[RMDB]
The data come from the RNA Mapping Database (RMDB), library OK2TRN. This 177-nucleotide RNA was probed chemically with DMS.

RNA sequence: GGGAACGACUCGAGUAGAGUCGAAAAUUAUUUUGAAGGUCGCCUCGAUAAAGUGAUUACGUUGUAAUGAUAUUUUAACGUGACGCAGAAUUAUGAACGCUCUUGCGUACUACUCAAAUACAUCAUCCAAUGGCCCAAUUUUCGAAUUGGGCCAUUGAAAAGAAACAACAACAACAAC
Reactivity to DMS in 0.01 (KOAc 150mM, MgCl2 10mM, bicine 150mM(pH8.5), 24C), signal-to-noise 2, nucleotides 027 to 126: u020u000a040u000u000u030u000g000a090a120g000g020u010c010g020c020c050u000c060g010a090u000a040a040a110g020u000g000a090u000u000a000c020g010u000u010g010u000a050a060u010g020a130u010a300u000u010u020u000a010a030c070g010u000g010a020c060g010c020a060g000a140a070u000u020a120u000g010a080a050c060g000c040u000c190u000u010g020c020g020u010a070c020u000a040c030u000c010a090a070a080u000a060c300a090u000c090a110u010c090